RNA sequence: GGGAACGACUCGAGUAGAGUCGAAAAGGGGUCUUUCUUGUCAGUCGCGAAGGACGCUUGGAUUUAUGUGCUGAAGCCUCCACGGCACAUUGUCAGCGUCCUAGCGACUUGGAUUUAGAAAGACGGAGGCACCCAAACGCGUUCUUCGGAACGCGAACAAAGAGUCUAACUUCGGUUAGACUCUUUGAAAAGAAACAACAACAACAAC
Reactivity to DMS in 0.01 (KOAc 150mM, MgCl2 10mM, bicine 150mM(pH8.5), 24C), signal-to-noise 1, nucleotides 027 to 156: g000g000g020g020u020c010u010u000u000c010u000u010g030u000c020a090g000u000c010g020c020g020a280a190g020g000a090c030g020c030u000u000g100g000a050u000u000u000a010u000g010u010g000c000u000g010a060a160g010c030c020u010c030c040a300c000g010g000c000a020c000a020u000u000g020u000c020a090g020c030g010u000c000c000u010a050g000c000g050a010c010u010u010g000g030a050u000u000u010a070g000a020a020a040g000a040c050g030g050a140g060g020c040a120c010c030c000a090a050a160c000g050c000g010u010u000c020u010u000c300g080g000a030a000c010g060c070g000a020a200
Reactivity to 2A3 in 0.01 (KOAc 150mM, MgCl2 10mM, bicine 150mM(pH8.5), 24C), signal-to-noise 2, nucleotides 027 to 156: g050g030g010g010u010c030u000u000u000c000u000u020g000u000c010a030g000u000c000g040c010g050a210a030g010g010a000c010g000c010u130u190g190g000a080u200u300u120a040u070g020u000g000c010u070g140a190a120g060c040c020u010c050c030a030c000g000g000c010a000c000a000u010u020g020u030c000a000g010c000g000u000c000c000u000a000g010c010g000a000c000u000u010g000g000a000u110u050u200a000g000a000a030a000g020a010c000g000g010a020g000g050c010a090c000c000c000a050a080a070c000g000c000g020u000u000c010u060u020c200g040g000a000a010c000g020c010g000a030a000
Source: RMDB library RNAMAK, as collected in RNAgym. Chemical mapping of a 207-nucleotide RNA with DMS and 2A3. 2A3 adducts were read by reverse transcription with SuperScript II with manganese. The 2A3 profile rests on 1,478 reads. The RNA was probed in 150 mM KOAc, 10 mM MgCl2 and 150 mM bicine (pH 8.5) at 24 C. Values cover nucleotides 27 to 156.